Record summary:
Chemical mapping of a 207-nucleotide RNA with 2A3 and DMS. The 2A3 profile rests on 3,780 reads. The RNA was probed in 150 mM KOAc, 10 mM MgCl2 and 150 mM bicine (pH 8.5) at 24 C. For DMS, 4,820 sequencing reads were counted. 2A3 adducts were read by reverse transcription with SuperScript II with manganese.

[RMDB]
RNA sequence: GGGAACGACUCGAGUAGAGUCGAAAAGAUGGUUGGACGAGGUUAAAAAUGAAUGGUGCGGACUUGAUGGACUGCCACUUGCCGACGCGUCAGCCGACGUGGGCACCAUUCGUGACAUUGAGGAGUUGAUGUCAACGCGAGGAAAACGGGCAGCCGCAGUUCUGGUAAGAUUCGUCUUACCAGAACUAAAAGAAACAACAACAACAAC
Reactivity to 2A3 in 0.01 (KOAc 150mM, MgCl2 10mM, bicine 150mM(pH8.5), 24C), signal-to-noise 5, nucleotides 027 to 156: g030a040u090g020g010u040u060g000g000a030c030g010a040g060g020u100u150a030a060a040a040a090u160g020a010a000u030g000g010u020g000c030g030g080a130c060u060u110g060a120u130g110g050a090c040u060g050c040c020a060c060u040u060g000c020c020g090a140c020g010c000g010u020c020a090g110c120c170g020a040c020g000u030g010g070g010c010a000c010c000a020u050u000c010g000u020g000a000c020a080u040u090g060a050g080g000a050g070u060u060g040a030u040g030u040c030a030a060c050g020c060g060a040g010g000a030a080a020a090c060g020g000g000c020a010g010c020c010g020c050
Reactivity to DMS in 0.01 (KOAc 150mM, MgCl2 10mM, bicine 150mM(pH8.5), 24C), signal-to-noise 2, nucleotides 027 to 156: g010a090u000g010g000u020u000g000g000a080c020g000a050g000g060u020u000a010a050a060a110a100u000g010a040a040u000g010g030u000g030c010g030g000a080c040u010u000g010a210u000g020g010a090c060u000g000c020c000a050c040u000u020g020c030c000g000a080c040g020c140g000u000c100a170g020c030c040g030a040c000g010u000g010g030g040c010a060c010c010a070u000u010c030g040u000g010a040c070a070u020u000g010a070g010g010a160g040u000u000g030a070u000g030u000c030a080a070c080g020c080g010a120g050g000a050a010a070a110c040g000g020g060c010a060g020c020c020g000c070